[RMDB]
RNA sequence: GGGAACGACUCGAGUAGAGUCGAAAAACUGCAAAAAAUACAAAUUCUUACGCAGUAGCUGCCUAAAAACCAGCCUGUGUGAUCAAUAACAAAUUGCUUGUGUUUGUUGAUUGGUCUUAUUGUUAACAAGCUACGUUAGAACUGAGUCAGGCUGUUCGCGUCUAAUGAAGUUCGCUUCAUUAGACGCAAAAGAAACAACAACAACAAC
Reactivity to 2A3 in 0.01 (KOAc 150mM, MgCl2 10mM, bicine 150mM(pH8.5), 24C), signal-to-noise 2, nucleotides 027 to 156: a000c070u130g020c060a040a030a020a040a030a080u230a090c100a030a160a010u150u100c120u190u070a030c040g000c000a000g000u030a030g010c020u040g000c000c010u060a050a060a010a000a000c020c000a010g000c000c000u000g000u000g020u020g030a030u030c000a000a050u000a000a000c000a000a010a030u080u080g000c040u030u080g040u030g000u060u000u000g020u030u040g170a070u000u010g000g000u040c010u020u120a160u060u140g090u100u010a030a040c040a000a040g080c050u040a020c120g020u010u100a030g020a180a020c060u110g000a000g170u070c060a040g040g010c000u010g030u040u030c070
Reactivity to DMS in 0.01 (KOAc 150mM, MgCl2 10mM, bicine 150mM(pH8.5), 24C), signal-to-noise 1, nucleotides 027 to 156: a090c070u010g020c080a010a010a100a070a020a100u010a280c050a090a100a100u000u010c080u000u010a080c090g060c000a050g020u000a060g000c070u010g020c020c010u000a040a070a080a130a170c190c000a020g030c000c010u000g080u020g020u000g000a020u000c010a010a030u000a010a030c000a000a020a020u010u000g020c250u010u000g020u010g010u000u000u010g010u010u010g010a040u000u010g000g000u000c000u000u010a090u000u000g000u040u050a080a080c080a160a180g040c020u000a010c040g020u010u000a080g010a010a050c030u000g020a160g030u000c030a040g040g000c010u010g000u010u040c040
The record gives the reactivity of an RNA of 207 nucleotides to 2A3 and DMS. For DMS, 2,177 sequencing reads were counted.